Chemical mapping of a 177-nucleotide RNA with 2A3 and DMS. The 2A3 profile rests on 1,720 reads. The DMS profile rests on 1,352 reads. Conditions: 150 mM KOAc, 10 mM MgCl2 and 150 mM bicine (pH 8.5), 24 C.
[RMDB]
RNA sequence: GGGAACGACUCGAGUAGAGUCGAAAACUGGCGAAUCUCGCCUUGACUCGUGGUGUUUUCACGCAACUUUUGGUGAGUUUGCGCUAACUCUUGCUGAAUCUGCUCCACCGUCACAGUGAGAGCCAACCUGUGUUGAAGACUUCGGUCUUCAACACAGAAAAGAAACAACAACAACAAC
Reactivity to 2A3 in 0.01 (KOAc 150mM, MgCl2 10mM, bicine 150mM(pH8.5), 24C), signal-to-noise 2, nucleotides 027 to 126: c030u040g040g040c020g030a070a100u040c010u000c010g020c010c000u010u020g010a020c010u020c080g030u000g010g020u100g070u020u120u200u180c040a010c060g000c010a030a170c000u090u070u090u260g000g020u040g030a040g030u040u080u250g140c050g000c020u030a070a070c010u040c010u030u060g010c000u000g000a110a140u060c020u050g030c040u000c010c040a100c010c030g070u050c040a010c020a080g010u000g050a060g000a020g000c000c000a040a050c000
Reactivity to DMS in 0.01 (KOAc 150mM, MgCl2 10mM, bicine 150mM(pH8.5), 24C), signal-to-noise 1, nucleotides 027 to 126: c180u000g010g020c000g020a090a100u000c040u000c010g000c010c010u000u010g000a060c040u000c110g000u000g020g010u000g010u000u030u010u030c030a050c090g000c090a030a030c140u010u000u010u000g020g040u000g010a060g000u000u010u030g020c030g010c030u010a050a130c050u000c030u000u010g000c020u000g000a120a060u000c090u000g010c020u000c050c000a060c050c100g000u000c040a080c060a030g030u020g000a010g000a010g020c020c010a050a110c170